[RMDB]
Background: This 207-nucleotide RNA was probed chemically with 2A3. Values cover nucleotides 27 to 156. The RNA was probed in 150 mM KOAc, 10 mM MgCl2 and 150 mM bicine (pH 8.5) at 24 C. For 2A3, 871 sequencing reads were counted. For 2A3 the reverse transcriptase was SuperScript II with manganese.
RNA sequence: GGGAACGACUCGAGUAGAGUCGAAAAAUCACCGGUGGGGAACCCCAUACGGCAACGGCGUAGAAGUAAAUGCUAUCCAAUCCGUGGUAUCUACGCGACGGAGCAUCCACGGAUAACUCUAACAAGGCUAAGCGUCUCGGUUUCGACCGAGACGCAAGUAGUAGUUAUCCUUCGGGAUAACUACUACAAAAGAAACAACAACAACAAC
Reactivity to 2A3 in 0.01 (KOAc 150mM, MgCl2 10mM, bicine 150mM(pH8.5), 24C), signal-to-noise 2, nucleotides 027 to 156: a000u030c000a010c000c000g000g000u010g030g000g030g110a170a190c010c050c010c000a010u170a190c020g020g000c080a070a010c030g030g010c030g010u000a010g000a060a000g000u120a050a000a000u060g020c040u060a090u170c100c090a100a060u040c000c000g020u000g000g000u020a020u020c000u000a000c000g020c020g060a060c070g100g060a020g000c000a020u000c000c000a000c000g020g000a000u010a020a010c010u010c050u130a020a170c170a190a030g100g020c070u120a130a060g060c000g000u000c010u000c020g000g030u000u130u120c110g040a030c010c000g000a000g090a000c000g010c000a010a000